[RMDB]
RNA sequence: GGGAACGACUCGAGUAGAGUCGAAAACUACUGAGAGGAGGUGCAUGGCCGCCGUCAGCUCGUACCGUGAGGCGUCCUGUUAAGUCAGGCAACGAGCGAGACCCGCACUUCUAGUUGCCAGCAAUACAAUAUGUUGUUCCUUCGGGAACAACAUAUUAAAAGAAACAACAACAACAAC
Reactivity to DMS in 0.01 (KOAc 150mM, MgCl2 10mM, bicine 150mM(pH8.5), 24C), signal-to-noise 4, nucleotides 027 to 126: c010u020a040c050u020g000a120g030a180g010g000a050g010g020u000g000c030a070u020g000g020c080c050g010c070c050g030u000c070a140g000c000u010c050g010u010a280c080c020g000u060g000a120g000g020c160g020u030c010c020u000g000u000u040a090a150g010u030c020a050g000g000c300a060a040c000g010a040g020c050g010a090g040a090c040c030c260g010c010a060c040u010u010c030u030a080g020u020u000g010c040c010a100g000c160a100a070u010a070c180
Reactivity to 2A3 in 0.01 (KOAc 150mM, MgCl2 10mM, bicine 150mM(pH8.5), 24C), signal-to-noise 4, nucleotides 027 to 126: c070u110a030c050u070g080a070g000a030g110g020a040g000g010u030g010c040a060u190g010g010c000c020g000c000c000g120u060c020a020g030c010u010c030g060u110a120c020c020g050u100g100a070g030g040c070g030u160c000c000u030g020u040u140a110a120g290u060c040a010g020g000c010a020a020c000g000a020g060c000g000a050g030a090c010c000c020g000c010a020c000u020u020c010u010a050g030u030u070g010c000c020a040g000c020a060a070u110a180c020